[RMDB]
This 177-nucleotide RNA was probed chemically with DMS and 2A3. Source: RMDB library TTRDEL, as collected in RNAgym. For 2A3 the reverse transcriptase was SuperScript II with manganese. The DMS profile rests on 6,144 reads. Values are in units of 0.01, from 0 to 300, in steps of 10. The reactions ran in a buffer of 150 mM KOAc, 10 mM MgCl2 and 150 mM bicine (pH 8.5), at 24 C.

RNA sequence: GGGAACGACUCGAGUAGAGUCGAAAAGAUAUGGAUGUGGCAACAGCGAUCCAUCGGAAACGAUGGUGUCGACAUGCCAAUCCUAAGUCAAAAGGAACAGUGUCCUGUUCGCAGGACACUGUUCCAACAUAGCCUUUGAGUUCGCUCAAAGGCUAUGAAAAGAAACAACAACAACAAC
Reactivity to DMS in 0.01 (KOAc 150mM, MgCl2 10mM, bicine 150mM(pH8.5), 24C), signal-to-noise 5, nucleotides 027 to 126: g010a020u000a300u010g000g010a020u000g010u000g010g020c000a020a080c270a160g010c030g000a060u000c000c000a010u000c000g000g000a090a070a170c000g010a010u010g000g010u010g010u000c000g010a100c080a210u000g000c000c000a080a030u000c000c000u000a040a080g000u000c020a050a070a090a130g010g000a020a010c010a020g000u000g010u000c000c000u000g000u010u020c210g030c000a000g000g000a010c000a000c000u000g000u000u000c000c000a030a060
Reactivity to 2A3 in 0.01 (KOAc 150mM, MgCl2 10mM, bicine 150mM(pH8.5), 24C), signal-to-noise 3, nucleotides 027 to 126: g010a010u050a030u110g030g000a060u090g060u100g300g000c010a060a060c070a300g110c030g010a010u000c000c010a010u000c000g040g010a020a040a030c010g000a000u000g000g060u050g020u060c010g030a180c010a030u030g000c000c000a000a000u010c000c000u020a080a010g030u000c030a050a030a070a170g020g000a000a010c000a030g020u000g000u030c000c010u000g020u080u090c300g020c100a010g030g000a000c000a000c020u010g000u000u000c000c000a000a000